[RMDB]
RNA sequence: GGGAACGACUCGAGUAGAGUCGAAAAGUCGCCGCGAGUAUUCUUGUACGGGGAAGCGCACUUCGCUGUCUCAUCCCGUGUGGCCACAGCCUCCUUAACGCGCGCCAGGUGCCGGUGACUUCCGUGUACCGCUUGAGUACGUGCUAAUACCGCCGGACAUGAGUCGUUAGUUCGCUAACGACUCAUGAAAAGAAACAACAACAACAAC
Reactivity to 2A3 in 0.01 (KOAc 150mM, MgCl2 10mM, bicine 150mM(pH8.5), 24C), signal-to-noise 2, nucleotides 027 to 156: g050u060c010g000c040c000g000c070g010a040g070u110a070u150u120c090u120u160g060u060a010c010g000g000g000g070a000a080g000c020g000c030a090c090u230u190c120g010c050u060g080u090c020u010c070a240u130c030c000c000g000u050g010u020g000g010c040c010a050c050a040g010c020c010u070c000c020u140u100a140a030c110g000c000g030c000g000c040c010a040g010g000u010g020c010c000g030g020u050g060a110c000u100u010c030c000g100u130g010u080a030c050c020g050c040u060u100g030a030g020u040a060c010g020u010g020c030u080a050a060u030a160c000c030g050c010c040g040g010a030
Reactivity to DMS in 0.01 (KOAc 150mM, MgCl2 10mM, bicine 150mM(pH8.5), 24C), signal-to-noise 1, nucleotides 027 to 156: g010u000c030g000c060c040g010c040g030a190g020u000a120u000u010c060u000u000g030u000a080c010g030g040g040g010a060a100g000c010g060c130a090c130u000u010c050g070c010u020g020u020c030u000c080a160u020c010c020c020g100u000g000u000g040g060c050c000a070c050a100g020c000c020u010c060c010u000u000a070a100c070g000c050g070c000g020c040c010a180g010g010u020g030c030c020g030g030u020g000a080c070u020u000c020c040g000u010g060u000a020c030c040g000c090u020u010g010a140g020u000a050c030g040u010g040c060u000a100a080u010a150c040c040g010c030c010g010g000a300